RNA sequence: GGGAACGACUCGAGUAGAGUCGAAAAGAUAUGGAUCUGUUGUCAGUCUUUGUAUCGGAAACGAUACAAUAGACUUGGAUUUACAGAGUCCUAAGUCAAAACAGCAGUUUGUUCGCAAACUGCUGAAGAACGGUACUGAGUUCGCUCAGUACCGUUCAAAAGAAACAACAACAACAAC
Reactivity to 2A3 in 0.01 (KOAc 150mM, MgCl2 10mM, bicine 150mM(pH8.5), 24C), signal-to-noise 1, nucleotides 027 to 126: g010a020u060a020u150g010g000a010u000c000u010g010u000u030g000u000c090a070g000u010c000u000u020u000g000u000a000u020c030g000g000a090a000a030c000g010a000u020a040c030a010a020u240a010g020a000c000u030u100g000g000a050u230u200u000a010c010a010g040a020g180u090c000c000u020a080a030g020u050c030a000a010a130a180c010a000g060c000a010g000u030u000u000g030u090u240c160g030c170a010a000a000c000u000g030c010u020g000a000a000
Reactivity to DMS in 0.01 (KOAc 150mM, MgCl2 10mM, bicine 150mM(pH8.5), 24C), signal-to-noise 1, nucleotides 027 to 126: g000a020u000a300u000g000g020a300u000c000u000g000u010u000g000u000c000a030g000u000c000u010u000u000g010u020a000u000c000g000g000a070a070a180c000g000a030u000a000c000a020a040u000a000g010a020c000u000u000g000g000a000u000u000u010a000c000a020g010a060g030u000c000c000u020a050a130g010u000c030a080a130a150a160c000a000g020c000a000g020u010u000u000g020u000u030c150g020c000a010a000a010c000u000g000c000u000g010a020a040